[RMDB]
RNA sequence: GGGAACGACUCGAGUAGAGUCGAAAACGCCCGGUGAUCGGUAGCGACGUCAAGCAAUUCGGGUUCCGCGGUAAGGCAUUCGUCGAUGACUAGCGGGCAGCGCGGCGCGAACGGGCAACCCGGUGCCGCCGGACAAGAAUUUCGAUUCUUGUCCGGCAAAAGAAACAACAACAACAAC
Reactivity to 2A3 in 0.01 (KOAc 150mM, MgCl2 10mM, bicine 150mM(pH8.5), 24C), signal-to-noise 2, nucleotides 027 to 126: c080g040c040c020c000g000g100u080g020a110u070c050g030g080u040a030g010c030g080a170c010g000u060c080a090a070g010c030a050a180u200u110c010g160g000g000u180u150c000c000g000c050g000g000u120a080a010g060g000c030a060u170u260c190g050u010c070g090a100u110g060a020c000u010a080g030c020g000g050g000c000a020g110c030g000c010g000g060c000g020c030g050a060a020c000g000g000g000c020a020a070c010c010c000g020g060u030g010c020c060
Reactivity to DMS in 0.01 (KOAc 150mM, MgCl2 10mM, bicine 150mM(pH8.5), 24C), signal-to-noise 2, nucleotides 027 to 126: c250g040c020c000c040g070g030u000g010a040u000c030g010g000u000a170g000c020g010a070c080g030u000c090a110a160g000c070a060a230u010u010c090g000g000g000u010u000c020c010g030c070g000g000u000a130a110g030g010c050a090u010u010c090g010u010c070g000a080u030g000a050c020u000a130g000c040g000g000g000c050a080g000c060g000c090g020g020c150g010c100g030a060a110c050g000g000g000c080a110a150c100c000c010g000g000u000g010c060c060